[RMDB]
RNA sequence: GGGAACGACUCGAGUAGAGUCGAAAAGCAGCAGUGAAUUAAAAUAAACAUGAAGAUCAAGAACAAGAUACAAACGGCAAGUUUCGUUCGAUCCAUGAGCCGAAUAAUAUCACAAAGAAGAAGAAAAAACGUUCAAAUAGUUCGCUAUUUGAACGUUAAAAGAAACAACAACAACAAC
Reactivity to DMS in 0.01 (KOAc 150mM, MgCl2 10mM, bicine 150mM(pH8.5), 24C), signal-to-noise 2, nucleotides 027 to 126: g020c050a070g050c070a050g060u000g030a070a090u010u010a040a020a090a160u000a090a150a100c060a020u010g000a060a090g010a010u010c000a120a120g010a090a030c030a110a070g000a060u010a040c100a050a070a060c060g000g020c070a120a100g010u000u000u000c110g000u010u010c080g000a050u010c010c010a060u010g000a160g000c070c050g010a060a110u000a050a030u020a050u010c050a030c080a070a070a090g000a090a080g000a050a050g010a010a040a080a050
Reactivity to 2A3 in 0.01 (KOAc 150mM, MgCl2 10mM, bicine 150mM(pH8.5), 24C), signal-to-noise 1, nucleotides 027 to 126: g060c050a020g000c010a000g040u030g020a070a000u140u100a040a150a020a110u200a020a120a020c040a020u070g020a140a010g000a020u020c000a040a040g040a040a030c050a100a000g030a040u150a050c110a000a180a000c000g070g000c100a070a070g020u000u030u080c060g000u020u050c020g000a030u000c000c020a030u020g040a020g000c010c010g000a000a020u060a050a000u030a020u060c060a020c050a130a030a000g100a010a000g060a030a030g000a010a050a000a110